[RMDB]
RNA sequence: GGGAACGACUCGAGUAGAGUCGAAAAAAUCGACAACGUCAUGAUGUCAUGUUGUAGUGGCCAACCACCACCAUGUAAAUUACUCAUAGUAUUUAGAUAUUCAGGUAUAAUCUUGGGAAAAUGUCGCAAUGUGAUCUCGAUUAAAUCUCUUGUGUCCCUUCAAUCAUCAGUUCGCUGAUGAUUGAAGAAAAGAAACAACAACAACAAC
Reactivity to DMS in 0.01 (KOAc 150mM, MgCl2 10mM, bicine 150mM(pH8.5), 24C), signal-to-noise 2, nucleotides 027 to 156: a040a010u000c050g020a070c050a060a110c060g040u020c070a110u000g030a140u000g000u000c060a150u010g000u000u000g020u000a030g020u000g000g040c030c020a130a180c110c040a140c010c010a000c010c040a080u000g020u000a040a060a110u000u000a050c030u020c030a130u000a160g000u000a130u000u000u010a080g010a120u000a070u000u000c080a050g020g050u000a060u010a060a080u020c040u000u010g030g000g010a050a080a080a100u000g020u010c010g010c020a020a070u000g020u000g030a030u000c030u000c000g000a110u010u000a050a060a100u010c040u000c000u000u010g010u000g000u010c030c090
Reactivity to 2A3 in 0.01 (KOAc 150mM, MgCl2 10mM, bicine 150mM(pH8.5), 24C), signal-to-noise 5, nucleotides 027 to 156: a000a000u080c070g040a060c050a210a090c080g070u050c040a060u090g080a060u090g050u040c020a050u020g060u030u040g080u090a100g010u020g000g020c090c040a090a090c080c000a030c000c000a010c020c010a010u060g040u150a000a080a110u110u110a050c020u020c060a070u100a160g030u040a030u110u110u070a060g030a080u050a060u110u110c040a030g000g050u060a070u070a230a090u030c020u050u030g010g020g070a020a090a070a080u070g030u050c040g000c060a040a070u060g010u020g020a050u060c010u010c060g010a000u030u100a050a120a100u040c040u000c000u050u050g030u040g060u080c020c010
The data come from the RNA Mapping Database (RMDB), library OK3TST. An RNA of 207 nucleotides, treated with DMS and 2A3 and read out base by base. The reactions ran in a buffer of 150 mM KOAc, 10 mM MgCl2 and 150 mM bicine (pH 8.5), at 24 C. For 2A3, 2,805 sequencing reads were counted.